[RMDB]
RNA sequence: GGGAACGACUCGAGUAGAGUCGAAAAGAUAUGGACCAUUAAGGGAGCAGUUCGGAAACGAAUACUGCGAAGAACUUACUGGUCCUAAGUCAAAACGUGGUGUUGCUCUUCGGAGCAACACCACGAACACAUCCCGAUAGUUCGCUAUCGGGAUGUGAAAAGAAACAACAACAACAAC
Reactivity to DMS in 0.01 (KOAc 150mM, MgCl2 10mM, bicine 150mM(pH8.5), 24C), signal-to-noise 1, nucleotides 027 to 126: g010a090u020a300u010g000g030a020c000c000a010u000u000a000a010g080g000g020a210g020c000a020g020u000u000c000g010g020a120a100a130c000g010a030a100u000a030c010u000g020c010g000a100a120g000a160a120c000u000u000a010c010u000g010g000u000c000c000u000a010a040g000u010c030a140a080a080a170c000g120u000g000g000u000g060u000u020g010c010u000c000u000u000c200g000g020a000g030c010a010a010c000a020c000c000a000c000g030a030a010